[RMDB]
RNA sequence: GGGAACGACUCGAGUAGAGUCGAAAACGGCAAAAAAGCAAACUUGAGCACCAAGGAUAAAAGAGAUCUUAUCCAAGGAUGCAAAAGAUAAUCUCACUUUUGACACCCACUGAUCUCGAACUUAAAGAAAACCGAGACUACUUCGGUAGUCUCGGAAGCUAACCUAUAGGUUCGCCUAUAGGUUAGCAAAAGAAACAACAACAACAAC
Reactivity to 2A3 in 0.01 (KOAc 150mM, MgCl2 10mM, bicine 150mM(pH8.5), 24C), signal-to-noise 4, nucleotides 027 to 156: c030g060g020c050a020a000a030a030a040a040g070c090a110a120a050c050u050u070g040a030g000c010a010c020c000a020a030g000g000a010u020a020a050a020a020g070a010g000a020u020c010u020u030a010u020c020c010a010a030g020g020a050u020g000c010a000a020a030a050g020a020u130a090a090u080c050u020c040a060c030u060u010u030u050g050a060c020a070c020c030c010a030c080u090g040a060u020c030u010c050g040a110a100c060u130u150a140a100a050g090a040a080a050a040c000c000g000a000g000a000c000u000a000c000u000u050c120g050g000u000a000g000u000c000u000c000g000g000a000a000
Reactivity to DMS in 0.01 (KOAc 150mM, MgCl2 10mM, bicine 150mM(pH8.5), 24C), signal-to-noise 1, nucleotides 027 to 156: c070g010g030c040a030a090a070a050a010a050g030c030a070a090a160c020u000u010g040a300g000c000a100c030c060a040a300g010g000a040u000a020a010a050a090g000a190g000a160u000c030u000u000a030u000c050c060a000a300g000g010a110u000g010c000a010a070a020a000g010a030u000a070a160u000c100u010c070a060c020u000u000u000u010g000a180c060a040c070c000c040a100c130u000g000a020u000c010u000c010g030a140a060c060u000u010a040a030a230g000a070a040a090a120c030c000g000a040g000a030c000u000a000c000u020u010c300g010g080u000a000g000u000c010u000c000g040g020a000a030